Notes:
This 177-nucleotide RNA was probed chemically with DMS and 2A3. The reactions ran in a buffer of 150 mM KOAc, 10 mM MgCl2 and 150 mM bicine (pH 8.5), at 24 C. The DMS profile rests on 3,741 reads. DMS (dimethyl sulfate) methylates the pairing face of unpaired adenines and cytosines. 2A3 adducts were read by reverse transcription with SuperScript II with manganese. DMS adducts were read by reverse transcription with MarathonRT. Source: RMDB library OK1LIB, as collected in RNAgym. For 2A3, 3,445 sequencing reads were counted.

[RMDB]
RNA sequence: GGGAACGACUCGAGUAGAGUCGAAAAUCAUUUUGUCUAAGUAUGACUGCACUUAUAAGAUCAUGGGAAUGGGCGACAAUCAGGUUCUUCAAAUCACUGUAUAUUCGAAAAAGCUGGACACAGAAGGCCCUACGUAACAGUUCGCUGUUACGUAGGGAAAAGAAACAACAACAACAAC
Reactivity to DMS in 0.01 (KOAc 150mM, MgCl2 10mM, bicine 150mM(pH8.5), 24C), signal-to-noise 3, nucleotides 027 to 126: u080c070a130u000u030u030u020g000u010c060u000a050a120g020u030a070u020g000a100c060u000g020c030a040c030u000u020a110u020a130a140g000a010u050c000a080u010g000g020g000a050a030u000g000g000g000c050g000a080c080a040a120u000c030a040g030g020u000u000c010u010u010c050a050a080a100u000c060a030c040u000g000u030a040u020a110u000u030c060g000a040a030a030a050a110g000c040u000g000g000a060c240a020c100a050g000a020a060g010g000
Reactivity to 2A3 in 0.01 (KOAc 150mM, MgCl2 10mM, bicine 150mM(pH8.5), 24C), signal-to-noise 5, nucleotides 027 to 126: u110c050a050u020u140u150u210g050u000c020u060a070a080g050u050a140u190g060a040c000u040g010c040a020c050u100u080a070u050a300a110g040a110u050c020a060u090g000g000g100a080a090u070g000g040g020c040g010a000c040a010a040u060c020a010g100g020u080u030c020u030u040c000a020a030a200u060c020a010c030u010g040u060a050u050a040u190u170c060g080a090a090a000a000a010g020c040u040g040g000a020c030a000c020a150g090a090a010g080g010